[RMDB]
RNA sequence: GGGAACGACUCGAGUAGAGUCGAAAAUAACCAUAGUCUGAUAUUUGCAGUUGGAAUGAAUUCCUGUGACAGCAUGAACAUACACCCACCAACAUGUCUGUAAUAGAAACCACUUUGGAAGACACUAGAGGCUGCCACAGAUUUCUCAGGUCCUCAACAUGAUAGUGGACUUCGGUCCACUAUCAUGAAAAGAAACAACAACAACAAC
Reactivity to 2A3 in 0.01 (KOAc 150mM, MgCl2 10mM, bicine 150mM(pH8.5), 24C), signal-to-noise 2, nucleotides 027 to 156: u040a010a020c010c010a010u000a010g020u020c010u050g050a000u000a110u080u050u140g010c010a000g010u060u020g040g090a130a080u070g020a020a110u140u100c070c010u050g050u050g040a010c000a010g050c010a020u080g080a140a020c040a020u200a050c060a090c040c050c010a030c020c010a050a090c040a050u070g090u040c060u070g050u080a050a080u080a200g090a090a060a020c040c010a090c100u110u090u040g030g010a020a040g030a000c000a020c100u020a020g020a030g160g000c000u000g000c050c000a040c000a030g100a030u010u170u000c050u040c050a010g090g000u030c000c030u000c020a030a040
Reactivity to DMS in 0.01 (KOAc 150mM, MgCl2 10mM, bicine 150mM(pH8.5), 24C), signal-to-noise 1, nucleotides 027 to 156: u030a080a160c040c030a230u010a020g020u000c060u000g030a160u000a030u000u000u000g000c010a090g010u000u020g020g000a120a110u030g040a020a150u020u010c080c010u010g050u000g000a020c020a050g000c020a070u000g000a000a130c030a160u020a040c020a210c230c020c010a090c040c020a070a300c060a090u010g020u020c030u010g020u020a120a150u000a100g000a070a070a090c050c020a020c150u000u010u000g000g000a130a070g020a080c020a030c050u000a160g000a190g000g010c040u020g000c010c000a040c000a130g010a110u010u000u000c050u000c070a140g000g000u000c020c020u000c030a020a220